RNA sequence: GGGAACGACUCGAGUAGAGUCGAAAACACACCGCUAUUAACUUGAAUAACACAGUGCACUCUUUUCCACCAGAAGUAGCACAAGAAGCGUUCAUGUAUUCAAGUAACAGUAGUGGACUUAGUUGAAGACACAGAACAUUGCUCAGUCCAUGUCCUGACCUUCCGUCUAGUUCGCUAGACGGAAGGUAAAAGAAACAACAACAACAAC
Reactivity to 2A3 in 0.01 (KOAc 150mM, MgCl2 10mM, bicine 150mM(pH8.5), 24C), signal-to-noise 1, nucleotides 027 to 156: c100a010c010a020c000c100g070c060u090a100u090u150a080a080c000u020u000g010a000a010u170a300a020c070a010c010a060g050u020g000c020a090c020u000c030u040u070u070u000c090c200a190c010c000a000g010a070a000g120u020a020g010c020a000c020a030a030g070a070a000g060c100g090u170u100c090a070u150g040u050a000u010u010c000a010a010g010u010a030a030c030a080g060u050a000g010u040g000g030a020c040u030u050a000g000u010u080g080a150a040g080a030c110a000c050a190g240a300a010c030a100u180u180g050c000u000c010a000g020u050c000c000a050u110g000u070c000c010u020g030
This 207-nucleotide RNA was probed chemically with 2A3.
It was measured as part of the RMDB library OK3TST.
The RNA was probed in 150 mM KOAc, 10 mM MgCl2 and 150 mM bicine (pH 8.5) at 24 C.